Chemical mapping of a 207-nucleotide RNA with DMS and 2A3. It was measured as part of the RMDB library RNAMAK. The reactions ran in a buffer of 150 mM KOAc, 10 mM MgCl2 and 150 mM bicine (pH 8.5), at 24 C. The DMS profile rests on 6,765 reads. The 2A3 profile rests on 3,622 reads.
RNA sequence: GGGAACGACUCGAGUAGAGUCGAAAAAAGCGUUUCGACGCUUCACUCCCGUAGGAUCACAAUACAGCGAGGUGGGAGAGGUUCGAAAGAGCUCCCCACCUCCCACUACCCACCGCUGUUUUGCGAUCCUAAACGGUGGAUGUCAUUUCGAUGACAAACUUUCUAUGGUUUUCGAACCAUAGAAAGUAAAAGAAACAACAACAACAAC
Reactivity to DMS in 0.01 (KOAc 150mM, MgCl2 10mM, bicine 150mM(pH8.5), 24C), signal-to-noise 3, nucleotides 027 to 156: a050a020g010c010g020u000u000u020c240g020a110c000g030c000u000u000c040a130c120u000c000c000c010g060u000a030g000g010a040u000c000a060c010a030a060u010a040c010a040g030c000g030a110g040g020u010g010g010g010a050g000a260g020g010u000u010c040g010a200a080a220g020a130g020c040u000c150c040c010c040a170c100c010u000c000c010c030a060c040u000a070c030c010c000a300c140c020g000c020u000g010u000u000u000u000g020c010g020a020u000c010c010u010a000a010a090c030g000g020u010g000g000a160u000g000u000c000a130u000u000u010c110g010a110u010g020a080c040a080a100
Reactivity to 2A3 in 0.01 (KOAc 150mM, MgCl2 10mM, bicine 150mM(pH8.5), 24C), signal-to-noise 4, nucleotides 027 to 156: a010a010g060c070g000u100u100u130c210g120a040c000g010c020u030u040c030a100c060u050c020c010c010g010u020a010g000g020a000u010c010a020c000a040a030u020a020c000a010g010c010g010a020g000g020u010g000g020g010a090g010a030g030g020u070u040c030g050a160a150a110g010a070g030c020u090c050c040c000c000a030c000c000u000c000c000c000a020c010u100a040c020c080c030a040c010c030g000c010u000g000u010u020u010u000g010c020g000a000u010c000c000u010a020a040a010c040g070g030u110g080g080a130u070g020u000c010a010u080u180u140c190g100a040u030g010a000c000a020a090